[RMDB]
RNA sequence: GGGAACGACUCGAGUAGAGUCGAAAAACUACCUCAGCCGGACCCGUGAAGGGAUGUGGGACGAUUCUCGCGAUGCACUCGAGCCACUGAAUCUCGACUCUCGCGACCGGAUUCUGGACGUGGGCUGUGGAACUGGCGAGUUGAGCCGCAUCCUCGCCUUUGUUGUACCAUUCGUGGUACAACAAAGAAAAGAAACAACAACAACAAC
Reactivity to 2A3 in 0.01 (KOAc 150mM, MgCl2 10mM, bicine 150mM(pH8.5), 24C), signal-to-noise 2, nucleotides 027 to 156: a000c010u020a050c020c020u030c030a020g000c010c000g050g030a080c020c010c000g030u130g090a130a160g040g010g120a020u020g040u010g090g080g080a110c050g040a050u070u000c000u010c010g000c010g060a050u100g050c070a050c040u000c040g130a030g000c020c020a050c100u090g030a020a050u020c080u100c140g050a060c040u040c000u020c100g100c100g080a060c020c010g000g010a080u050u000c010u060g070g000a030c060g070u110g050g030g000c040u030g070u060g010g030a070a040c060u090g100g000c000g010a030g030u020u030g060a030g030c030c000g000c010a000u020c000c000u010c010g120c000